[RMDB]
RNA sequence: GGGAACGACUCGAGUAGAGUCGAAAAAAUGUGCUCAACAGGAUGCCAUUCCUCUUGUGGUAGCUGGGAGGGGACUUGAGUGCCACUCCAAAGGUUCUAACUGGUGCCACUGGGUGGCCACCAGUGCCACAUACUGCGCAUUCGUGCGCAGUAUGUGAAAAGAAACAACAACAACAAC
Reactivity to 2A3 in 0.01 (KOAc 150mM, MgCl2 10mM, bicine 150mM(pH8.5), 24C), signal-to-noise 3, nucleotides 027 to 126: a000a000u060g080u100g020c020u020c040a080a210c050a220g230g040a060u180g030c010c010a010u040u050c000c020u080c090u100u110g060u070g070g000u020a010g030c030u020g050g010g020a030g000g010g020g010a030c030u100u230g090a030g080u300g070c010c010a010c010u040c000c000a080a130a000g030g000u060u010c030u070a040a040c010u010g000g010u020g020c020c040a050c110u180g300g110g020u000g010g010c000c000a010c000c000a000g000u000g000c010
Reactivity to DMS in 0.01 (KOAc 150mM, MgCl2 10mM, bicine 150mM(pH8.5), 24C), signal-to-noise 5, nucleotides 027 to 126: a030a010u010g010u020g010c010u000c040a200a130c250a120g000g000a050u010g010c010c040a040u000u000c020c010u000c270u010u000g010u010g020g010u000a050g020c040u000g000g020g010a050g010g000g010g000a030c020u010u010g000a130g030u010g000c030c010a040c010u000c010c020a050a100a100g010g000u000u000c060u010a140a050c020u000g010g000u000g000c020c010a020c010u010g010g020g020u000g010g000c150c070a010c010c000a020g000u010g010c160